RNA sequence: GGGAACGACUCGAGUAGAGUCGAAAAAAACUUACGCAGUAAUGGGUAAUGAAGACGGUCAGUGGUAUACUGUAAAAGUUGUGAUUAACAUGUUCACUGCUGAAGGUUAUGUUAAACUGUCUUCUAAAGUUUACCAUGAUAACGACGAAAUCGCAGACUAUUGUGCUGAUUUCGAUCAGCACAAUAGAAAAGAAACAACAACAACAAC
Reactivity to DMS in 0.01 (KOAc 150mM, MgCl2 10mM, bicine 150mM(pH8.5), 24C), signal-to-noise 4, nucleotides 027 to 156: a030a040a050c050u000u000a100c060g030c040a140g020u010a120a050u000g020g020g010u000a070a080u000g020a080a050g010a060c020g040g010u010c020a160g030u010g020g030u000a070u000a020c030u000g010u000a060a050a060a060g020u000u000g010u010g000a200u000u000a040a060c090a050u000g020u000u000c060a060c030u000g010c080u040g010a150a210g010g010u000u000a040u000g010u000u000a030a020a060c020u000g010u000c050u000u000c030u000a060a040a050g020u010u000u000a040c000c010a030u000g000a100u010a060a100c040g010a200c050g020a070a060a300u000c060g010c060a070g020a300
Reactivity to 2A3 in 0.01 (KOAc 150mM, MgCl2 10mM, bicine 150mM(pH8.5), 24C), signal-to-noise 3, nucleotides 027 to 156: a000a000a000c060u090u070a050c090g010c070a050g020u130a070a050u090g060g030g020u050a050a060u110g050a020a020g000a000c040g040g020u030c030a050g060u050g100g000u080a050u050a030c010u040g030u110a050a040a050a070g010u020u040g000u000g030a070u070u010a110a020c040a090u130g040u040u030c020a000c040u010g000c030u030g040a020a000g050g000u070u080a060u070g060u050u060a010a060a020c000u010g020u030c000u050u010c020u050a050a110a030g000u000u050u010a040c000c000a020u010g030a040u050a070a020c030g080a000c040g040a050a060a060u080c060g010c050a000g030a070